[RMDB]
RNA sequence: GGGAACGACUCGAGUAGAGUCGAAAACCUUACGGUGACGUAAGGAGGAGCUGUCUUCGGACAGCUCCAAGCCAACGUUCGCGUUGGCACUUGAAGCUUCGGCUUCAAGAACAUACGCGCGUGAGCGCGUAUGACGAAUACUUCGGUAUUCGAGCCGCACGUGAGUGCGGCACCACUGCGUGAGCAGUGGACCUGUGUCUACGGACACAGGAGCACUGAUCGUGAGAUCAGUGCAACAGAGUUAUCAUACUCUAUAAACUAUGACUAGAGUUGAGUUCGCUCAACUCAAAAGAAACAACAACAACAAC
Reactivity to 2A3 in 0.01 (KOAc 150mM, MgCl2 10mM, bicine 150mM(pH8.5), 24C), signal-to-noise 9, nucleotides 027 to 266: c000c000u000u000a010c010g020g030u080g100a020c010g010u000a010a000g000g010a120g000g000a000g000c010u000g000u010c010u050u100c230g140g000a000c000a000g010c000u000c000c000a000a000g000c000c000a000a000c000g040u080u110c260g030c010g110u000u000g000g000c000a040c000u000u000g000a000a000g010c000u040u130c290g100g000c000u000u000c040a000a000g010a010a000c000a000u000a000c000g010c000g010c010g040u100g100a070g010c000g000c000g000u000a000u000g020a010c010g000a000a000u000a000c010u030u070c220g120g000u000a000u000u000c000g020a040g010c000c010g070c010a030c030g170u180g200a150g020u000g020c000g000g000c010a010c000c000a000c000u010g000c010g080u120g080a080g000c000a000g000u010g000g000a010c000c000u000g000u000g000u000c000u010a070c300g110g000a000c000a000c000a000g000g000a010g000c000a000c000u000g000a000u000c000g030u040g080a070g000a020u000c000a000g000u000g000c000a000a010c050a000g000a000g000u020u070a070u070c010a010u040a060c010u010c010u040a220u070a300a040a020c060u070a040u100g050a020c050u120a080
Reactivity to DMS in 0.01 (KOAc 150mM, MgCl2 10mM, bicine 150mM(pH8.5), 24C), signal-to-noise 1, nucleotides 027 to 266: c010c010u000u010a000c000g000g000u020g000a110c000g010u000a000a020g010g000a150g000g010a060g010c020u000g000u000c020u010u000c210g010g010a000c010a000g010c000u000c000c000a020a040g010c000c000a010a020c050g000u010u040c300g010c000g030u000u010g000g000c050a090c010u000u050g000a000a030g000c000u000u020c260g000g000c000u010u000c000a000a000g000a300a300c020a000u000a010c000g030c030g040c000g000u010g000a250g000c010g040c010g000u000a000u000g000a170c030g000a030a010u010a000c000u000u020c190g030g010u020a000u000u000c040g010a100g020c010c010g000c070a000c000g000u030g000a230g020u000g020c000g000g000c050a010c010c010a030c000u000g000c010g000u010g000a300g000c010a030g000u000g000g000a140c000c000u010g000u010g000u000c000u000a140c170g030g000a010c010a000c000a010g000g010a140g010c040a000c030u000g010a000u000c010g000u020g000a140g010a020u000c000a020g010u010g000c040a030a020c300a000g000a010g000u000u000a170u020c040a030u000a110c000u000c010u000a080u000a000a020a020c020u000a000u000g000a000c270u010a130